Notes
The record gives the reactivity of an RNA of 177 nucleotides to 2A3 and DMS. In probing experiments dimethyl sulfate is read out at A N1 and C N3, which are open when not base-paired. 2A3 adducts were read by reverse transcription with SuperScript II with manganese. The 2A3 profile rests on 110,596 reads. Conditions: 150 mM KOAc, 10 mM MgCl2 and 150 mM bicine (pH 8.5), 24 C.
RNA sequence: GGGAACGACUCGAGUAGAGUCGAAAAGAGCUUGAUGCUAGAUUGUUCUAAUUGGACAUUAGAACAACUACUUUACCUUGGUAGAGUAGUAUGAUUAUGUUCAAUAAAUCGUAAAUCUAGCAUCAUAGAUAGUAUAGUGAUUCGUUACUGUGCUAUCAAAAGAAACAACAACAACAAC
Reactivity to 2A3 in 0.01 (KOAc 150mM, MgCl2 10mM, bicine 150mM(pH8.5), 24C), signal-to-noise 9, nucleotides 027 to 126: g050a010g030c030u020u020g000a000u000g000c000u000a000g000a000u000u040g070u150u050c030u060a050a020u000u000g000g000a000c000a000u030u050a050g110a110a020c000a000a000c000u000a000c000u000u000u000a000c000c010u060u250g160g000u000a000g000a000g000u000a000g000u000a040u010g000a000u000u010a000u000g000u000u000c000a000a000u040a030a070a000u110c050g030u020a010a000a010u000c000u000a000g000c000a000u000c000a000u000a000
Reactivity to DMS in 0.01 (KOAc 150mM, MgCl2 10mM, bicine 150mM(pH8.5), 24C), signal-to-noise 7, nucleotides 027 to 126: g000a110g010c120u010u000g000a010u000g000c000u000a000g000a010u000u010g010u020u000c060u010a090a070u000u010g000g000a020c020a010u000u010a020g010a050a130c030a020a050c000u000a000c000u000u000u000a000c000c050u040u030g010g010u000a000g000a000g000u000a000g000u000a020u000g000a050u000u000a010u000g010u000u000c010a010a000u010a050a090a010u020c180g000u020a060a020a000u000c000u000a000g010c000a000u000c010a010u020a050